[RMDB]
RNA sequence: GGGAACGACUCGAGUAGAGUCGAAAAGCUAGGUCAGAGCAUGGUGGCUCAGGUCUGGCAGCUCCAUGUGACCUCCUCUCCACCUUCUCACCAUCAAAACAUUGGGACCAGGAUGCUUGGUCAUACUGAUGGAUACAAAGCAAGGAGAGAUGGUUGAUAUUUAGGUCCUGUUCGCAGGACCUAAAUAAAAAGAAACAACAACAACAAC
Reactivity to DMS in 0.01 (KOAc 150mM, MgCl2 10mM, bicine 150mM(pH8.5), 24C), signal-to-noise 1, nucleotides 027 to 156: g000c010u010a040g000g010u000c020a150g030a050g040c000a150u000g000g060u000g060g000c020u000c030a080g070g000u010c020u000g000g020c040a120g000c070u000c010c030a170u010g020u010g000a080c000c010u000c050c020u010c010u000c000c000a090c050c020u010u000c050u000c070a180c000c000a020u040c010a050a180a160a130c080a160u020u000g010g010g020a070c020c040a000g010g050a190u000g000c040u030u010g010g060u020c020a080u010a260c140u010g000a050u000g020g030a160u070a120c130a040a060a130g010c180a160a080g000g010a090g000a150g020a020u000g000g000u000u000g020a100
Reactivity to 2A3 in 0.01 (KOAc 150mM, MgCl2 10mM, bicine 150mM(pH8.5), 24C), signal-to-noise 3, nucleotides 027 to 156: g020c010u020a030g000g040u020c020a020g020a030g030c050a100u120g150g090u120g180g000c000u000c020a010g010g070u000c000u030g040g000c000a040g000c030u030c040c030a100u210g110u180g040a010c000c000u090c050c000u000c030u010c000c010a120c030c020u060u040c040u020c060a100c020c000a010u050c000a010a130a120a100c140a140u170u220g120g100g000a000c010c000a020g090g040a150u180g240c110u120u030g030g000u000c000a010u120a090c050u020g010a010u000g010g000a010u030a130c060a040a070a000g080c100a120a080g010g000a000g000a000g000a010u070g010g000u000u080g020a020
The data come from the RNA Mapping Database (RMDB), library OK3TST. An RNA of 207 nucleotides, treated with DMS and 2A3 and read out base by base. The reactions ran in a buffer of 150 mM KOAc, 10 mM MgCl2 and 150 mM bicine (pH 8.5), at 24 C. The 2A3 profile rests on 1,527 reads. DMS adducts were read by reverse transcription with MarathonRT.